Chemical mapping of a 177-nucleotide RNA with 2A3 and DMS.

RNA sequence: GGGAACGACUCGAGUAGAGUCGAAAAUCCGAGUGGACGUCUGUCCUCCUUCGGAUGCCCAGGUCGGACCGCGAGGAGGUGGAGAUGCCAUGCCGACCCGAAGAGGAAGAAGAGGACAUGGACGCGACAGAACUAAUUUGUUCGCAAAUUAGUUCUGAAAAGAAACAACAACAACAAC
Reactivity to 2A3 in 0.01 (KOAc 150mM, MgCl2 10mM, bicine 150mM(pH8.5), 24C), signal-to-noise 3, nucleotides 027 to 126: u000c010c000g010a040g060u150g060g050a060c010g040u000c070u100g010u000c000c000u020c000c060u010u020c020g030g030a040u050g000c000c030c000a010g030g000u010c020g000g020a060c010c020g030c070g060a090g080g030a070g060g030u070g050g060a160g020a060u210g050c050c010a040u120g010c000c010g010a030c030c010c000g090a100a040g020a050g060g010a030a040g010a020a000g010a030g000g010a010c000a030u100g070g020a010c000g000c000g010a010
Reactivity to DMS in 0.01 (KOAc 150mM, MgCl2 10mM, bicine 150mM(pH8.5), 24C), signal-to-noise 4, nucleotides 027 to 126: u010c000c010g010a110g030u010g020g000a080c000g000u000c060u000g000u000c000c000u000c090c050u000u000c000g000g010a170u040g000c010c040c020a080g020g010u000c020g000g010a160c030c090g000c170g000a180g010g020a120g010g010u000g010g010a140g010a130u010g010c000c010a080u000g010c020c010g020a030c020c000c030g000a110a050g000a110g000g020a300a120g010a050a040g000a050g000g000a040c040a060u010g000g000a020c040g000c050g010a200
Source information
Conditions: 150 mM KOAc, 10 mM MgCl2 and 150 mM bicine (pH 8.5), 24 C.